[RMDB]
RNA sequence: GGGAACGACUCGAGUAGAGUCGAAAAAUUGUGGCAACAAUAGAGCAGAGGUAAGCAAGAGCAAAUACAAAGAGUAUGAGCAAUACUACUCUGACUGUGUCAAAGAAGGAUUCAAAGUAGCUUGCUACACGGGGCAAGCUUUCGAGCUUGCCCCGUGAAAAGAAACAACAACAACAAC
Reactivity to DMS in 0.01 (KOAc 150mM, MgCl2 10mM, bicine 150mM(pH8.5), 24C), signal-to-noise 2, nucleotides 027 to 126: a080u000u040g030u000g000g000c060a040a100c060a060a070u030a110g030a200g050c030a170g000a050g000g000u050a050a080g000c040a070a060g030a080g010c050a020a230a030u000a050c040a210a050a020g010a070g000u000a040u000g000a300g000c170a080a010u010a050c000u000a010c010u000c000u000g000a050c100u000g000u040g020u030c120a040a010a010g000a080a030g010g000a040u000u000c030a000a080a060g030u000a040g000c120u000u000g000c010u000a160
Reactivity to 2A3 in 0.01 (KOAc 150mM, MgCl2 10mM, bicine 150mM(pH8.5), 24C), signal-to-noise 1, nucleotides 027 to 126: a000u130u100g000u010g010g000c030a050a000c020a160a110u010a250g100a030g100c030a000g000a030g070g150u140a080a000g000c010a120a080g140a000g100c000a000a070a070u050a060c000a000a280a000g130a190g000u010a000u160g130a120g000c030a020a020u060a220c090u000a000c000u030c020u070g020a040c000u100g070u000g020u170c100a300a010a000g030a080a020g040g000a010u080u080c010a080a210a000g010u030a000g040c000u000u030g000c000u010a010